[RMDB]
RNA sequence: GGGAACGACUCGAGUAGAGUCGAAAAGAAAAGUUUGUGAGAAGGUUGGGGUGGCCCACCGAUAUGGGUAUGAUGGUUUCCUGUCAUACUACAGUGGUGCGAAACUCCGUACUUACACACGAGCUAACGUUUGGCAACGAUUCGUCGUUGCCAAACGAAAAGAAACAACAACAACAAC
Reactivity to DMS in 0.01 (KOAc 150mM, MgCl2 10mM, bicine 150mM(pH8.5), 24C), signal-to-noise 1, nucleotides 027 to 126: g030a060a050a100a000g030u000u000u000g030u000g000a220g000a030a160g000g010u000u000g000g000g000g000u000g030g000c200c300c000a030c000c030g000a070u070a010u000g000g000g000u000a000u000g000a000u000g000g000u040u140u050c240c030u010g000u000c000a000u030a000c000u110a030c090a020g040u000g000g000u010g000c260g030a300a030a000c000u030c030c000g000u000a000c000u000u000a300c100a240c000a020c040g020a000g000c000u000a080a100
Reactivity to 2A3 in 0.01 (KOAc 150mM, MgCl2 10mM, bicine 150mM(pH8.5), 24C), signal-to-noise 1, nucleotides 027 to 126: g100a010a060a000a000g030u050u050u040g020u040g010a110g030a110a070g030g000u110u090g060g000g010g010u000g040g050c010c000c010a030c010c010g020a010u040a040u080g000g030g000u020a000u010g000a000u000g060g000u100u130u200c040c000u030g000u010c010a000u000a000c000u040a100c000a000g010u010g010g000u090g010c140g020a010a010a010c000u000c000c010g020u050a030c000u000u100a040c110a000c000a020c120g010a000g000c000u020a070a030

Structure probing data (DMS and 2A3) for a 177-nucleotide construct. Conditions: 150 mM KOAc, 10 mM MgCl2 and 150 mM bicine (pH 8.5), 24 C. The 2A3 profile rests on 1,190 reads. 2A3 adducts were read by reverse transcription with SuperScript II with manganese.